[RMDB]
RNA sequence: GGGAACGACUCGAGUAGAGUCGAAAAGGGCUUGACGCAUCGCCCGAAUAGGAUGCAUGUGCUUUUGCACUAAGAUAAAUGUCCGUAUGGUAGGGGACUUAGAACCUACUCAUUAAUGUCCGAAGAGUCUGGGACGAUCAUCAGGCGAGACUAAGAAACGUCCUAUGGGAUUCGUCCCAUAGGACGUAAAAGAAACAACAACAACAAC
Reactivity to DMS in 0.01 (KOAc 150mM, MgCl2 10mM, bicine 150mM(pH8.5), 24C), signal-to-noise 1, nucleotides 027 to 156: g000g000g020c000u010u000g030a060c080g000c090a020u000c000g090c000c000c000g000a120a110u000a120g020g010a110u000g090c040a130u030g010u000g000c010u040u000u000u000g070c000a020c000u010a090a130g010a140u020a030a030a090u000g010u030c000c070g000u000a130u010g010g030u010a070g080g000g000g030a210c130u000u000a200g000a160a300c010c000u000a020c000u000c030a090u000u000a050a090u000g010u020c000c010g000a280a110g000a250g010u000c080u010g040g010g000a110c000g000a010u000c020a110u000c010a050g000g110c000g000a110g010a120c050u020a080a300g000a110a100
Reactivity to 2A3 in 0.01 (KOAc 150mM, MgCl2 10mM, bicine 150mM(pH8.5), 24C), signal-to-noise 2, nucleotides 027 to 156: g010g010g010c030u070u110g120a010c060g020c000a010u010c040g000c020c030c000g000a020a050u040a100g070g050a030u000g010c030a030u010g020u010g000c010u020u100u300u300g000c080a050c020u030a060a080g020a240u040a120a090a170u170g060u000c000c000g000u010a020u090g030g000u000a010g010g000g000g050a060c030u030u060a000g010a040a000c010c000u000a000c020u010c030a000u010u150a050a030u170g030u000c040c030g060a050a070g050a040g100u000c020u040g000g000g060a040c080g020a010u000c000a000u020c000a050g010g070c030g060a010g010a080c040u120a090a000g020a050a140

Chemical mapping of a 207-nucleotide RNA with DMS and 2A3. Reactivities are given for positions 27 through 156. The reactions ran in a buffer of 150 mM KOAc, 10 mM MgCl2 and 150 mM bicine (pH 8.5), at 24 C.